Annotation
The record gives the reactivity of an RNA of 207 nucleotides to 2A3. The reactions ran in a buffer of 150 mM KOAc, 10 mM MgCl2 and 150 mM bicine (pH 8.5), at 24 C.
RNA sequence: GGGAACGACUCGAGUAGAGUCGAAAACUCCACGCUGGGUAAUGGACGACGGCGGCGUGUGGCGAACAGGGAUACCGGCAGUCAGUGUCUGGAACAUCCCAAGGGGCGGCGGAGCUAGCACCCCGACAAAACGGGCACAAGUUCGCUUGUGCCCGAACGAGAACUGAUAGUUCGCUAUCAGUUCUCGAAAAGAAACAACAACAACAAC
Reactivity to 2A3 in 0.01 (KOAc 150mM, MgCl2 10mM, bicine 150mM(pH8.5), 24C), signal-to-noise 2, nucleotides 027 to 156: c010u010c000c010a020c000g000c020u050g070g000g010u150a170a150u120g040g030a040c030g040a000c020g070g000c010g000g000c020g000u030g000u040g060g020c050g000a100a040c100a110g020g000g010a010u010a060c000c020g060g000c000a020g080u300c030a040g190u020g010u070c090u210g020g010a030a060c010a020u020c000c000c030a040a060g000g020g000g000c070g020g000c040g070g020a020g050c020u030a020g000c020a020c010c000c000c010g010a030c020a010a120a030a040c000g000g000g000c000a000c000a010a000g010u030u100c110g020c120u000u000g010u000g000c000c010c030g010a000a000
The data come from the RNA Mapping Database (RMDB), library M2RFPK.